[RMDB]
Chemical mapping of a 177-nucleotide RNA with DMS and 2A3. 2A3 adducts were read by reverse transcription with SuperScript II with manganese. In probing experiments dimethyl sulfate is read out at A N1 and C N3, which are open when not base-paired. The reactions ran in a buffer of 150 mM KOAc, 10 mM MgCl2 and 150 mM bicine (pH 8.5), at 24 C. The data come from the RNA Mapping Database (RMDB), library M2PK90.
RNA sequence: GGGAACGACUCGAGUAGAGUCGAAAAUCAUUGGCUUCGCUGCGCGCUGCGUUGCCUAGGCUUCAGAUCCUUCGUACUGUUGCCAACGUUGCAAUUUCCAAACGCUAAUGCGAAAGUGUGCAAACAAUGUCGGUAGAGAAUUCGUUCUCUACCGACAAAAAGAAACAACAACAACAAC
Reactivity to DMS in 0.01 (KOAc 150mM, MgCl2 10mM, bicine 150mM(pH8.5), 24C), signal-to-noise 2, nucleotides 027 to 126: u040c060a090u010u010g000g020c020u000u000c020g010c030u000g020c090g000c000g010c060u000g010c090g020u000u000g040c000c010u000a150g010g000c000u000u020c020a030g010a160u000c120c110u010u010c150g000u010a120c060u000g000u010u000g010c020c010a030a090c210g000u000u000g000c080a070a070u000u010u050c050c060a080a030a110c030g000c020u000a080a130u020g010c030g020a100a030a060g000u000g000u000g030c080a130a070a090c230a050a100
Reactivity to 2A3 in 0.01 (KOAc 150mM, MgCl2 10mM, bicine 150mM(pH8.5), 24C), signal-to-noise 1, nucleotides 027 to 126: u080c010a030u030u060g000g000c050u040u050c030g010c060u080g000c020g000c000g010c000u040g000c010g040u020u020g000c000c020u010a050g000g050c010u010u030c010a030g010a200u090c070c010u080u110c140g030u060a070c020u030g050u060u030g000c000c030a060a030c090g040u040u090g000c050a080a050u040u050u000c020c000a030a000a070c040g020c040u150a190a020u210g010c010g020a040a000a010g050u050g010u030g050c000a110a050a010c060a050a160